[RMDB]
RNA sequence: GGGAACGACUCGAGUAGAGUCGAAAAGACAAGAGCCUGCCACCACCUGGCCCCUCCUCCUUCUGUCCCCAACCAGCACAGAUGGAGACCAGGCGUGGUGUGUAGCUUCAGGCAGGGCCUUUGUCCAAGAGACCAGUGCCUGGACACAGGCCACUGACCCUAUUAAUCCCUUCGGGGAUUAAUAGGGAAAAGAAACAACAACAACAAC
Reactivity to 2A3 in 0.01 (KOAc 150mM, MgCl2 10mM, bicine 150mM(pH8.5), 24C), signal-to-noise 1, nucleotides 027 to 156: g020a000c060a030a010g010a000g170c020c020u000g030c000c000a010c000c000a050c010c010u000g090g000c000c000c000c080u060c000c010u020c010c010u040u010c000u010g070u030c060c090c000c000a120a140c010c060a040g030c110a020c010a000g050a030u050g000g000a010g000a010c020c000a010g000g040c090g050u060g020g010u000g030u070g020u050a020g020c050u090u060c050a020g070g020c010a020g000g010g030c010c000u020u040u050g000u000c000c010a090a060g050a010g010a150c000c130a170g050u090g250c010c060u040g010g020a000c020a000c030a040g000g000c010c000a020c000u010g040a010